[RMDB]
Structure probing data (2A3) for a 207-nucleotide construct. The RNA was probed in 150 mM KOAc, 10 mM MgCl2 and 150 mM bicine (pH 8.5) at 24 C. Values cover nucleotides 27 to 156.

RNA sequence: GGGAACGACUCGAGUAGAGUCGAAAAGGGGUCGACCUAAGACAGAGAAAGACAUGCGUCUAUUCUGAAGCCUCCACGGAAUAACGCAACAGCUUUCUUCGAGGUCGACGGAGGCACCCAAAACCGACAUUAAGGUCUUCGGACCUUAAUGUCGGAAGUUAAACUUGGAGUUCGCUCCAAGUUUAACAAAAGAAACAACAACAACAAC
Reactivity to 2A3 in 0.01 (KOAc 150mM, MgCl2 10mM, bicine 150mM(pH8.5), 24C), signal-to-noise 2, nucleotides 027 to 156: g190g000g050g020u020c010g000a020c010c000u070a150a020g020a000c020a010g050a010g000a010a000a000g030a080c120a210u120g000c000g000u020c160u100a020u000u000c000u010g030a150a040g020c000c000u000c010c000a020c020g000g000a010a010u000a000a000c000g000c020a070a080c090a090g030c000u000u010u010c000u000u020c010g020a010g000g000u010c000g000a000c020g000g000a000g000g000c000a060c000c010c000a030a040a020a060c000c010g000a000c000a000u000u000a010a000g000g000u000c000u030u100c240g110g000a000c000c000u000u000a000a000u000g000u000c000g010g000a000a000
For 2A3 the reverse transcriptase was SuperScript II with manganese.